About this RNA:
An RNA of 207 nucleotides, treated with 2A3 and DMS and read out base by base. The 2A3 profile rests on 1,117 reads. It was measured as part of the RMDB library M2RFPK.
[RMDB]
RNA sequence: GGGAACGACUCGAGUAGAGUCGAAAAAAGACCGAGAGGUUCAAGCUUAUAGGGCAGAAAGCGGGGGACAGCAAUACUAAACAUUCCCUGUGGCUGAGACGAAGGUAGUACUCCAACAGCGUCUCAAAAAAGCAGCAGUCCUUCGGGACUGCUGCAACGUUCAAUUUAAGUUCGCUUAAAUUGAACGAAAAGAAACAACAACAACAAC
Reactivity to 2A3 in 0.01 (KOAc 150mM, MgCl2 10mM, bicine 150mM(pH8.5), 24C), signal-to-noise 2, nucleotides 027 to 156: a000a000g040a000c010c040g000a010g020a000g120g010u100u170c050a070a010g010c000u050u060a050u130a240g020g050g000c040a020g120a110a100a000g060c020g000g010g000g000g020a020c010a020g120c040a050a030u070a140c030u230a090a040a040c020a060u060u010c000c010c000u020g020u090g060g050c070u080g000a000g000a000c020g030a050a010g060g000u020a040g070u020a040c060u020c090c000a010a010c020a050g050c000g000u000c000u000c000a060a080a020a020a000a000g000c000a000g000c000a000g000u000c000c000u000u050c080g050g020g000a000c000u000g010c000u020g000c000a000a000
Reactivity to DMS in 0.01 (KOAc 150mM, MgCl2 10mM, bicine 150mM(pH8.5), 24C), signal-to-noise 1, nucleotides 027 to 156: a070a040g010a090c000c050g000a130g000a140g000g010u030u000c040a150a130g000c060u030u000a070u000a060g020g010g030c050a070g000a010a120a120g040c090g000g010g070g050g020a100c040a060g000c000a090a050u020a260c060u000a050a040a140c050a140u000u000c040c020c020u000g010u000g060g000c040u030g000a150g080a020c000g020a090a100g030g020u000a120g000u000a040c050u000c050c040a000a010c110a290g010c010g000u000c010u000c010a010a020a050a110a130a100g020c000a000g020c000a040g010u000c000c000u000u000c290g060g050g000a050c000u000g000c010u000g020c000a000a000
DMS adducts were read by reverse transcription with MarathonRT.